[RMDB]
RNA sequence: GGGAACGACUCGAGUAGAGUCGAAAAGGUCUAAAAACCAUGGUUGUGUCUGCGGGUCAAGAGCAAACUAACUGUAAUACUAGUUCCUUAGCUUAUUACGAACCUGUGCAGGGUCGUAAAAUGCUGACCUAAAUAUUCACUUCGGUGAAUAUUUAGGAAAAGAAACAACAACAACAAC
Reactivity to DMS in 0.01 (KOAc 150mM, MgCl2 10mM, bicine 150mM(pH8.5), 24C), signal-to-noise 4, nucleotides 027 to 126: g010g010u000c040u020a050a080a100a150a050c050c040a100u000g010g010u000u000g010u000g010u000c040u000g010c080g020g010g020u010c120a050a070g010a120g020c030a040a050a030c040u010a060a050c050u000g010u000a070a090u010a090c120u010a120g010u010u000c010c030u000u010a030g010c010u000u000a240u000u000a010c000g000a030a030c010c010u010g000u010g010c210a090g020g000g010u000c000g000u000a010a010a040a060u000g010c020u000g000a160
Reactivity to 2A3 in 0.01 (KOAc 150mM, MgCl2 10mM, bicine 150mM(pH8.5), 24C), signal-to-noise 4, nucleotides 027 to 126: g020g000u010c030u070a050a000a010a050a040c020c010a030u050g030g010u030u040g040u010g010u080c000u010g020c020g040g030g030u060c040a050a040g030a020g110c010a030a030a000c000u040a030a020c020u040g050u100a050a050u030a160c070u040a040g020u010u030c000c000u020u030a010g000c010u050u100a070u050u010a110c010g020a090a100c010c000u060g040u130g130c120a050g010g000g010u000c000g000u000a010a010a000a000u070g000c010u010g030a010